[RMDB]
RNA sequence: GGGAACGACUCGAGUAGAGUCGAAAAGUGGAUAGUUUCGACUAUCCACACAACUGAUGAUCUUACAGUGGAGGAUGAUGAAGAUGGCCAUCGGAUCCUCAAAUAGCACAGAGUUCGCUCUGUGCAACCGUACAGUCGCUUUCGAGCGACUGUACGGAAAAGAAACAACAACAACAAC
Reactivity to 2A3 in 0.01 (KOAc 150mM, MgCl2 10mM, bicine 150mM(pH8.5), 24C), signal-to-noise 1, nucleotides 027 to 126: g000u010g000g020a020u020a010g030u020u060u110c150g030a010c020u000a000u000c010c000a000c000a000c000a000a020c030u070g040a050u090g010a010u060c040u080u190a070c040a060g040u100g130g060a030g010g030a000u020g010a010u010g060a050a070g100a100u070g070g000c080c000a020u010c020g060g020a010u000c000c000u000c000a000a070a200u140a030g000c000a000c000a000g010a010g010u100u100c090g040c040u050c000u000g000u000g050c100a000a000